[RMDB]
This 177-nucleotide RNA was probed chemically with 2A3 and DMS. The reactions ran in a buffer of 150 mM KOAc, 10 mM MgCl2 and 150 mM bicine (pH 8.5), at 24 C. Reactivities are rounded to 0.1 and cut off at 0 and 3. The data come from the RNA Mapping Database (RMDB), library RFM100. For 2A3, 730 sequencing reads were counted. For 2A3 the reverse transcriptase was SuperScript II with manganese.

RNA sequence: GGGAACGACUCGAGUAGAGUCGAAAAAUGGAAUGAGGGGGUAACGCCCUGAAACGUCUUCCCUGAUACUCCGAUUGGCGCUGCAAGACAGCACUUGCAGGGUCAAGAGCUCGGUGAAGUCGGCUGACUGCUUUCCCAAGUUCGCUUGGGAAAGCAGAAAAGAAACAACAACAACAAC
Reactivity to 2A3 in 0.01 (KOAc 150mM, MgCl2 10mM, bicine 150mM(pH8.5), 24C), signal-to-noise 1, nucleotides 027 to 126: a000u070g050g080a040a110u090g010a180g010g000g000g010g010u020a040a000c020g120c010c000c000u010g010a000a020a000c010g000u000c020u030u020c000c020c000u010g000a000u050a160c000u000c000c120g130a140u020u020g020g000c240g010c060u000g000c000a000a020g050a140c270a180g030c080a130c030u000u000g000c000a000g000g030g000u000c000a010a000g000a000g010c000u000c040g000g080u010g000a030a000g060u060c050g010g010c000u030g010a080
Reactivity to DMS in 0.01 (KOAc 150mM, MgCl2 10mM, bicine 150mM(pH8.5), 24C), signal-to-noise 1, nucleotides 027 to 126: a100u040g000g010a010a000u020g000a270g010g030g000g010g010u000a140a040c300g000c000c000c000u000g010a010a070a010c010g000u000c000u000u000c000c000c000u010g040a120u000a080c090u000c080c270g020a300u000u000g000g000c000g000c000u000g000c000a000a020g000a120c210a200g020c110a070c000u000u000g000c000a000g000g000g000u000c000a000a030g020a000g030c300u000c000g000g000u000g000a020a060g000u020c010g000g080c180u000g000a270